[RMDB]
RNA sequence: GGGAACGACUCGAGUAGAGUCGAAAAGAUAUGGAGUGUCUUAGACGAUAAGACCUGGUCGGAAACGACCAGGGUCUUUUGACGUCUAACACUCCUAAGUCAAAAUCCACGUUGUUCGCAACGUGGAGUCAACAACAUGGUUCGCCAUGUUGUUGACAAAAGAAACAACAACAACAAC
Reactivity to 2A3 in 0.01 (KOAc 150mM, MgCl2 10mM, bicine 150mM(pH8.5), 24C), signal-to-noise 4, nucleotides 027 to 126: g010a000u010a010u080g010g000a010g000u020g010u030c160u110u040a010g010a010c030g200a240u100a300a010g000a000c000c010u000g010g000u010c000g000g000a030a000a010c010g010a010c000c020a010g040g000g030u000c000u000u020u050u190g180a100c000g010u010c000u010a000a000c000a000c000u000c000c000u000a000a000g010u000c000a050a000a010a300u020c010c010a000c010g000u020u000g070u070u090c300g010c250a010a010c000g010u000g010g010a020
Reactivity to DMS in 0.01 (KOAc 150mM, MgCl2 10mM, bicine 150mM(pH8.5), 24C), signal-to-noise 3, nucleotides 027 to 126: g010a010u000a070u020g000g000a010g030u000g000u010c300u010u000a010g010a010c000g020a120u010a010a010g000a090c000c000u000g000g010u000c020g030g000a040a020a020c000g020a000c000c010a000g000g030g010u000c000u000u000u000u000g010a180c070g010u000c010u000a010a020c000a010c000u000c000c000u000a000a040g000u000c000a130a070a090a300u000c010c000a010c010g020u010u000g010u000u010c260g020c010a010a000c000g040u010g000g000a020